[RMDB]
RNA sequence: GGGAACGACUCGAGUAGAGUCGAAAAGGACCUCACUCUGCGAGGUCCGCGUUCCAUCCUUUCUUACCUGAUGGCCGGCAUGGUCCCAGCCUCCUCGCUGGCGCCGGCUGGGCAACAUUCCGAGGGGCUUACUAUAUAACUUCGGUUAUAUAGUAAGAAAAGAAACAACAACAACAAC
Reactivity to DMS in 0.01 (KOAc 150mM, MgCl2 10mM, bicine 150mM(pH8.5), 24C), signal-to-noise 6, nucleotides 027 to 126: g010g000a000c000c010u000c010a070c130u010c180u000g010c090g010a010g010g010u000c000c000g000c070g000u000u000c000c010a130u010c080c070u000u000u000c050u000u010a120c070c060u000g010a120u000g000g000c020c000g000g000c010a120u010g020g010u010c280c000c000a030g000c040c030u000c040c020u000c050g000c020u000g000g020c180g020c000c020g000g000c000u000g010g000g000c050a050a110c070a090u010u010c100c040g000a040g000g010g010g000
Reactivity to 2A3 in 0.01 (KOAc 150mM, MgCl2 10mM, bicine 150mM(pH8.5), 24C), signal-to-noise 3, nucleotides 027 to 126: g010g000a000c000c020u000c010a070c040u300c150u300g070c130g020a000g000g000u000c000c000g000c010g000u050u040c020c010a050u090c010c020u100u150u110c040u120u130a100c030c020u060g080a120u150g120g050c020c020g030g000c020a090u180g070g030u090c000c010c030a000g020c000c010u050c000c020u000c020g050c020u030g040g000c030g010c020c010g060g000c010u010g010g000g000c010a040a030c010a080u160u070c040c010g020a030g000g010g000g000
An RNA of 177 nucleotides, treated with DMS and 2A3 and read out base by base. The reactions ran in a buffer of 150 mM KOAc, 10 mM MgCl2 and 150 mM bicine (pH 8.5), at 24 C. For DMS the reverse transcriptase was MarathonRT.